The record gives the reactivity of an RNA of 177 nucleotides to 2A3 and DMS. Values cover nucleotides 27 to 126. The DMS profile rests on 3,257 reads. The RNA was probed in 150 mM KOAc, 10 mM MgCl2 and 150 mM bicine (pH 8.5) at 24 C.
[RMDB]
RNA sequence: GGGAACGACUCGAGUAGAGUCGAAAAUCAGCAGCUAUUCUGACCUCUCACAAGAAAGAUUUGCUUCAAGUGCAGCCUCAAUGUGUUCAUCGCAUGGUCCCUUUACUCUUAGCUGUAUGGCACCAACCGGGAUGUAUUGAUUCGUCAAUACAUCCCGAAAAGAAACAACAACAACAAC
Reactivity to 2A3 in 0.01 (KOAc 150mM, MgCl2 10mM, bicine 150mM(pH8.5), 24C), signal-to-noise 4, nucleotides 027 to 126: u050c000a000g010c000a000g010c020u040a060u150u040c060u110g050a040c010c020u000c000u010c010a040c020a060a050g070a070a100a000g090a100u070u070u160g040c010u040u080c080a150a050g090u030g050c020a000g010c020c000u020c020a050a060u050g020u010g010u120u130c030a070u100c090g010c070a020u070g050g020u040c010c000c010u050u100u070a120c070u060c020u050u060a010g010c010u010g020u090a160u060g040g000c050a020c070c020a030a060c040
Reactivity to DMS in 0.01 (KOAc 150mM, MgCl2 10mM, bicine 150mM(pH8.5), 24C), signal-to-noise 4, nucleotides 027 to 126: u010c080a070g000c050a030g010c060u000a100u000u000c060u010g000a110c040c030u000c070u000c050a070c060a080a100g010a100a100a060g010a080u000u000u000g020c020u010u000c130a060a110g020u000g020c040a040g020c060c040u010c060a060a110u010g000u000g000u010u000c110a050u010c100g030c040a040u000g000g000u000c020c050c040u000u000u000a040c120u010c080u000u000a040g020c020u000g000u000a070u000g010g020c080a120c050c040a010a140c260